[RMDB]
Annotation: The record gives the reactivity of an RNA of 207 nucleotides to DMS and 2A3. 2A3 adducts were read by reverse transcription with SuperScript II with manganese. The DMS profile rests on 2,224 reads. The data come from the RNA Mapping Database (RMDB), library OK3TST. DMS adducts were read by reverse transcription with MarathonRT. Reactivities are given for positions 27 through 156.
RNA sequence: GGGAACGACUCGAGUAGAGUCGAAAAGCUAGUCGGAGACGACUAGCAACGAUCAGUUCGCUGAUCGGAAGGUGCAUUCAAAUACGCUAGAAGCACCAAUACACGACGCUUAGCGUAAAACUGAGAAAGCAGAUAACAAAAAUAAAAAGGCGUCGAGGACUACGUAUAGCUUCGGCUAUACGUAGUCAAAAGAAACAACAACAACAAC
Reactivity to DMS in 0.01 (KOAc 150mM, MgCl2 10mM, bicine 150mM(pH8.5), 24C), signal-to-noise 1, nucleotides 027 to 156: g030c000u000a010g000u000c020g000g050a300g000a220c010g080a010c020u000a000g040c000a010a040c020g000a040u000c000a020g020u010u000c290g070c040u050g010a030u010c020g050g000a030a080g000g000u030g000c000a300u000u000c040a030a070a240u000a040c000g010c010u000a210g000a080a090g020c000a020c020c000a120a180u000a100c120a120c050g030a040c020g000c000u000u000a060g000c000g000u010a050a060a070a150c030u000g000a180g010a070a120a100g000c020a040g000a140u030a050a120c130a000a070a100a130a160u000a030a020a020a060a090g030g040c010g060u000c000g020a050g000
Reactivity to 2A3 in 0.01 (KOAc 150mM, MgCl2 10mM, bicine 150mM(pH8.5), 24C), signal-to-noise 5, nucleotides 027 to 156: g000c010u000a000g000u000c000g030g010a030g010a080c010g000a000c000u000a000g010c000a000a010c000g000a000u000c000a000g030u050u090c150g010c080u000g000a000u000c010g000g050a080a060g000g010u010g020c130a300u010u050c000a010a020a070u060a000c000g010c020u010a020g000a020a000g010c010a000c000c000a000a000u180a040c110a020c010g000a000c000g000c020u030u060a000g000c000g000u010a040a020a070a100c020u040g010a030g110a220a140a030g120c060a020g060a070u160a130a110c110a040a130a030a030a010u240a070a110a010a010a000g020g000c000g000u000c010g010a040g050